Structure probing data (2A3 and DMS) for a 177-nucleotide construct. Values are in units of 0.01, from 0 to 300, in steps of 10. DMS adducts were read by reverse transcription with MarathonRT. It was measured as part of the RMDB library VIROID. For DMS, 10,481 sequencing reads were counted. High 2A3 reactivity points to a flexible backbone, as in loops and unpaired stretches.
RNA sequence: GGGAACGACUCGAGUAGAGUCGAAAAAACUGGCUCUCCCUUAGCCAUCCGAGUGGACGUUCGUCCUCCUACGGAUGCCCAGGUCGGACCGCGGGGAGGUGGAGAUGCCAUGCCGACCCGAAGAGGACAGAUAACUAAAGUUCGCUUUAGUUAUCUGAAAAGAAACAACAACAACAAC
Reactivity to 2A3 in 0.01 (KOAc 150mM, MgCl2 10mM, bicine 150mM(pH8.5), 24C), signal-to-noise 5, nucleotides 027 to 126: a000a000c020u000g010g000c000u000c000u000c010c000c000u030u050a060g040c020c010a010u000c010c000g020a030g030u010g000g010a010c020g060u130u090c100g010u110c010c070u040c020c020u100a090c010g000g000a010u010g000c010c000c010a040g020g090u040c030g080g060a070c040c010g060c080g060g010g010g010a030g030g020u130g030g010a050g000a020u240g000c000c010a050u130g020c020c020g100a100c000c000c000g020a070a020g070a040g090g010a020
Reactivity to DMS in 0.01 (KOAc 150mM, MgCl2 10mM, bicine 150mM(pH8.5), 24C), signal-to-noise 7, nucleotides 027 to 126: a060a040c070u000g000g000c010u000c010u000c010c000c030u000u000a110g020c270c030a110u000c010c000g010a120g010u000g000g000a020c010g010u010u010c110g000u000c050c040u010c080c050u010a070c010g000g000a010u000g020c020c000c010a120g010g000u000c070g020g020a210c120c170g000c100g010g010g000g010a070g000g020u010g000g000a040g000a050u010g020c020c010a020u000g020c020c020g000a130c010c000c020g010a090a090g000a110g010g010a300